[RMDB]
RNA sequence: GGGAACGACUCGAGUAGAGUCGAAAAGAUAUGGAUCACCGGAUUGGCACAGGAGGUCGGAAACGACUACCCACCCUGUGAACUACCAAGAAGGUGAUCCUAAGUCAAAGGUGGGUUCGCCCACCAAGUUUUCUGUGCAGUUCGCUGCACAGAAAACAAAAGAAACAACAACAACAAC
Reactivity to DMS in 0.01 (KOAc 150mM, MgCl2 10mM, bicine 150mM(pH8.5), 24C), signal-to-noise 1, nucleotides 027 to 126: g010a040u000a300u000g090g000a000u000c000a030c000c010g000g000a300u000u000g000g000c000a000c000a000g050g000a120g000g000u010c010g000g010a080a190a250c000g010a000c010u000a120c010c060c060a300c120c000c000u000g030u000g010a030a030c070u000a300c000c010a000a020g000a150a230g000g000u000g000a000u010c000c030u000a000a040g000u000c060a030a040a070g000g000u000g010g000g000u000u000c190g030c000c000c090a000c000c000a000a060